Structure probing data (DMS and 2A3) for a 177-nucleotide construct. DMS adducts were read by reverse transcription with MarathonRT. It was measured as part of the RMDB library TTRDEL. Reactivities are given for positions 27 through 126. For DMS, 813 sequencing reads were counted. Conditions: 150 mM KOAc, 10 mM MgCl2 and 150 mM bicine (pH 8.5), 24 C.
RNA sequence: GGGAACGACUCGAGUAGAGUCGAAAAGAUAUGGACGUACCUUUUGACGCUCUACUGGUCGGAAACGACCAUCGAGCGAUAAGGAUACGUCCUAAGUCAAAGAUUACGCUGUUCGCAGCGUAAUCAAGAGAUGAAUGCUCUUCGGAGCAUUCAUCUCAAAAGAAACAACAACAACAAC
Reactivity to DMS in 0.01 (KOAc 150mM, MgCl2 10mM, bicine 150mM(pH8.5), 24C), signal-to-noise 1, nucleotides 027 to 126: g000a000u010a300u000g040g000a010c030g020u000a020c020c000u000u000u000u020g030a120c120g000c000u000c010u020a200c300u000g000g000u030c000g020g000a020a020a090c020g020a020c000c000a020u000c300g000a000g000c000g040a190u010a010a000g000g020a070u000a020c010g000u000c000c000u030a000a050g020u010c010a140a090a100g000a010u000u000a000c000g020c000u000g000u000u010c190g000c000a000g020c000g000u000a000a000u000c020a120a040
Reactivity to 2A3 in 0.01 (KOAc 150mM, MgCl2 10mM, bicine 150mM(pH8.5), 24C), signal-to-noise 1, nucleotides 027 to 126: g040a040u010a030u080g000g000a010c000g000u000a000c010c000u000u040u130u250g290a180c100g000c000u040c010u050a120c190u040g000g000u000c000g010g000a050a090a050c010g000a000c000c000a000u030c050g010a000g000c010g030a010u010a000a000g020g000a090u000a000c010g000u000c000c000u030a010a020g000u000c040a100a030a130g000a020u030u010a000c000g020c010u010g010u070u070c300g000c250a000g000c000g010u000a000a010u000c000a000a010